Conditions: 150 mM KOAc, 10 mM MgCl2 and 150 mM bicine (pH 8.5), 24 C.
The record gives the reactivity of an RNA of 207 nucleotides to DMS and 2A3.
It was measured as part of the RMDB library M2RFPK.
For DMS, 3,163 sequencing reads were counted.
Values cover nucleotides 27 to 156.
DMS (dimethyl sulfate) methylates the pairing face of unpaired adenines and cytosines.
[RMDB]
RNA sequence: GGGAACGACUCGAGUAGAGUCGAAAAAGACGGAAACCCAUCGACUGUCACCAGAUGGUGCAUCACCUGAUCACUGAUGGCUCAACGGUAUCCGGCGGUACAACUGAAUACUUGUAGCUGCCUUUUGAAAAGGAGUUCAUCUUCGGAUGAACUCCAAGGUUAAUUUAGACUUCGGUCUAAAUUAACCAAAAGAAACAACAACAACAAC
Reactivity to DMS in 0.01 (KOAc 150mM, MgCl2 10mM, bicine 150mM(pH8.5), 24C), signal-to-noise 2, nucleotides 027 to 156: a050g000a130c020g000g010a070a110a070c060c000c030a080u000c060g020a070c020u010g000u000c000a110c060c000a020g010a110u000g000g010u000g020c160a110u010c020a050c000c000u010g030a100u010c060a040c070u010g000a050u000g020g020c020u030c020a120a060c050g050g010u010a070u000c000c000g000g080c000g000g020u010a080c110a060a080c010u000g040a120a080u000a060c040u000u000g030u000a040g000c020u000g000c030c120u000u000u010u000g030a030a100a170a170g000g000a040g020u000u000c000a000u000c010u020u010c300g040g000a030u000g020a020a000c000u010c010c000a000a010
Reactivity to 2A3 in 0.01 (KOAc 150mM, MgCl2 10mM, bicine 150mM(pH8.5), 24C), signal-to-noise 6, nucleotides 027 to 156: a000g070a010c060g030g030a060a040a030c030c000c010a050u060c060g070a040c060u080g040u090c020a020c040c020a040g060a220u100g040g030u060g030c040a080u080c020a030c030c030u060g040a060u060c030a000c030u040g010a030u030g030g020c020u030c060a050a050c040g050g000u060a090u080c070c000g000g010c010g010g010u030a010c010a050a020c040u160g090a150a060u100a160c030u050u030g030u040a030g090c020u030g000c000c000u080u110u070u120g100a080a060a030a030g000g000a000g000u000u000c000a000u000c000u030u040c110g090g000a000u000g000a000a000c000u000c000c000a000a000